[RMDB]
RNA sequence: GGGAACGACUCGAGUAGAGUCGAAAAUGCUUACCACUGCCUUCUUGCUUUUUGCAGGCCUGCAGAUAUGCAAACAUUUACACAGCCUUUGCACCUCUUGUCAAAGCUGUUUAUCUAUUGACAUGUUUAUUUAAAACUAGCUAUGGUGCCAGAUGAACUACCUACUAUACUUCGGUAUAGUAGGUAGAAAAGAAACAACAACAACAAC
Reactivity to DMS in 0.01 (KOAc 150mM, MgCl2 10mM, bicine 150mM(pH8.5), 24C), signal-to-noise 3, nucleotides 027 to 156: u010g030c020u000u000a070c030c110a220c000u010g020c030c040u010u000c020u000u000g000c010u000u010u010u000u010g010c000a050g000g020c070c070u000g020c020a050g000a120u000a060u010g020c050a090a030a060c050a040u000u010u000a110c080a090c040a100g030c030c030u000u000u000g030c010a070c040c070u000c100u000u000g000u010c030a060a110a130g000c030u010g020u000u000u010a100u020c050u010a160u000u000g010a060c030a060u000g010u000u000u000a100u010u000u000a040a050a070a110c080u000a070g010c060u000a080u000g020g030u000g010c000c040a070g000a100u010g010a090a240
Reactivity to 2A3 in 0.01 (KOAc 150mM, MgCl2 10mM, bicine 150mM(pH8.5), 24C), signal-to-noise 7, nucleotides 027 to 156: u050g020c020u060u080a050c010c010a040c040u020g020c000c020u050u050c010u030u060g010c020u080u130u060u180u270g000c030a020g020g010c010c030u030g000c000a030g020a110u080a030u160g030c020a020a090a020c030a090u060u110u110a050c080a000c010a030g030c020c030u050u070u080g010c040a030c010c050u100c020u130u190g040u150c020a010a030a010g010c020u010g050u050u070u050a040u020c030u030a130u100u080g050a060c030a050u050g040u070u090u050a200u040u150u090a040a110a030a060c030u040a040g030c030u050a020u140g010g010u020g000c020c020a060g020a090u070g020a060a030

Description: Structure probing data (DMS and 2A3) for a 207-nucleotide construct. For DMS the reverse transcriptase was MarathonRT. The DMS profile rests on 10,165 reads.